[RMDB]
RNA sequence: GGGAACGACUCGAGUAGAGUCGAAAAACAUGCACGCUACGGCGUGCAUGAAACCUCUUGAAAGACAUGGGUAGUGAGAUGUCCCGUACAUCUAAAAUUCUCACUACCUUGUCUUUCAUGCGGAUAACUCCAUCUUACUGUUCGCAGUAAGAUGGAGAAAAGAAACAACAACAACAAC
Reactivity to 2A3 in 0.01 (KOAc 150mM, MgCl2 10mM, bicine 150mM(pH8.5), 24C), signal-to-noise 9, nucleotides 027 to 126: a000c000a000u000g010c010a000c000g020c000u030a030c300g140g000c000g000u000g000c000a000u000g000a000a000a000c000c000u000c000u000u000g000a000a000a010g010a010c020a060u170g060g000g000u010a000g010u000g010a010g000a020u050g070u100c020c050c060g090u160a070c030a090u120c090u300a030a060a130a150u100u020c010u000c000a000c000u000a000c000c000u000u000g000u000c000u000u000u000c000a000u000g000c060g050g040a100u090a180a080
Reactivity to DMS in 0.01 (KOAc 150mM, MgCl2 10mM, bicine 150mM(pH8.5), 24C), signal-to-noise 3, nucleotides 027 to 126: a050c010a020u010g010c010a030c020g040c020u020a140c200g010g000c010g040u030g000c000a000u010g000a000a020a040c000c000u000c030u000u000g000a000a000a000g010a000c000a010u000g000g010g010u010a000g000u010g000a010g010a020u000g000u000c010c070c100g030u050a070c120a070u010c140u030a050a050a100a160u040u000c010u000c000a020c000u010a000c010c000u010u000g000u000c000u000u010u000c000a000u000g000c150g000g010a160u050a080a150
Structure probing data (2A3 and DMS) for a 177-nucleotide construct.